Source information
This 177-nucleotide RNA was probed chemically with DMS and 2A3. Reactivities are rounded to 0.1 and cut off at 0 and 3. For 2A3 the reverse transcriptase was SuperScript II with manganese. Source: RMDB library OK2TRN, as collected in RNAgym. For 2A3, 4,765 sequencing reads were counted. For DMS the reverse transcriptase was MarathonRT.
RNA sequence: GGGAACGACUCGAGUAGAGUCGAAAAUCUGUUUACUAGCUAUCGUGAAGUCUAACUCAGACUACGAUAGCACAAACAGAAAGAAGUUUGUGACAAGUCCGAGUUAGACUUUAGUCAGGACUGCUCACUACACCAAAGUAUUCGUACUUUGGUGUAGAAAAGAAACAACAACAACAAC
Reactivity to DMS in 0.01 (KOAc 150mM, MgCl2 10mM, bicine 150mM(pH8.5), 24C), signal-to-noise 6, nucleotides 027 to 126: u010c040u010g010u000u000u010a120c130u010a070g030c020u000a070u000c030g010u000g000a050a030g010u000c000u010a050a070c080u000c060a060g010a010c010u010a100c130g010a120u010a080g020c010a010c030a000a000a000c000a090g000a100a130a160g000a170a130g010u000u000u000g000u000g010a040c050a100a030g000u000c010c040g010a090g000u010u000a040g000a010c000u000u000u000a020g010u010c050a100g000g000a030c060u000g010c050u000c180a260
Reactivity to 2A3 in 0.01 (KOAc 150mM, MgCl2 10mM, bicine 150mM(pH8.5), 24C), signal-to-noise 3, nucleotides 027 to 126: u010c010u030g080u080u120u100a200c130u090a040g000c010u010a010u040c010g040u040g100a050a010g010u000c000u010a010a050c040u030c110a010g000a010c000u040a060c060g060a080u020a020g000c000a000c000a010a000a010c010a030g200a100a140a050g150a100a030g030u000u050u040g120u020g020a040c010a050a000g000u000c020c010g050a020g030u050u050a000g000a000c000u030u050u020a030g020u030c030a010g030g070a040c030u040g000c020u010c020a060